[RMDB]
RNA sequence: GGGAACGACUCGAGUAGAGUCGAAAAGGACGUGCUGUCGCGUCCGAAUUAACGACAGCAACUAGCCUGUCACCAACCAGGCGAAUUAUGUUGGUGAAAUGAGGCGAAAGCCUCUAUCAGACUGGGACAUAGCAGUCGAAUUACCUAUGUCAUUAGAAUCAUUUUACUAGUUCGCUAGUAAAAUGAUAAAAGAAACAACAACAACAAC
Reactivity to 2A3 in 0.01 (KOAc 150mM, MgCl2 10mM, bicine 150mM(pH8.5), 24C), signal-to-noise 6, nucleotides 027 to 156: g000g000a010c000g050u060g000c000u000g010u010c000g000c000g000u000c000c010g010a020a040u200u090a080a030c010g010a000c010a000g020c020a010a040c040u050a040g000c000c000u010g050u070c010a000c040c000a010a000c000c010a010g000g000c060g000a030a040u220u120a110u160g000u000u010g020g010u010g000a020a020a050u180g000a000g000g000c000g030a060a030a000g000c000c000u000c010u020a070u100c020a030g000a040c000u000g010g010g000a000c000a000u000a000g000c010a000g010u020c080g020a060a030u140u090a080c000c000u000a000u000g020u020c010a020u070u150a050g080a060
Reactivity to DMS in 0.01 (KOAc 150mM, MgCl2 10mM, bicine 150mM(pH8.5), 24C), signal-to-noise 3, nucleotides 027 to 156: g020g020a050c090g050u010g030c020u000g000u000c020g010c020g000u020c190c090g000a040a050u000u000a110a080c000g000a050c000a000g010c000a100a060c080u010a170g000c020c000u000g000u000c010a300c000c070a050a050c070c030a120g020g000c050g000a100a040u020u000a130u010g020u000u000g020g020u000g010a070a060a120u000g000a020g030g030c010g000a150a100a240g010c000c010u000c010u000a080u000c040a120g020a000c020u000g010g010g010a060c010a040u000a040g020c010a300g010u000c030g020a070a110u000u000a090c100c010u000a040u000g000u000c010a200u000u000a120g010a180
The record gives the reactivity of an RNA of 207 nucleotides to 2A3 and DMS. DMS adducts were read by reverse transcription with MarathonRT. Values cover nucleotides 27 to 156. The DMS profile rests on 6,514 reads. Values are in units of 0.01, from 0 to 300, in steps of 10.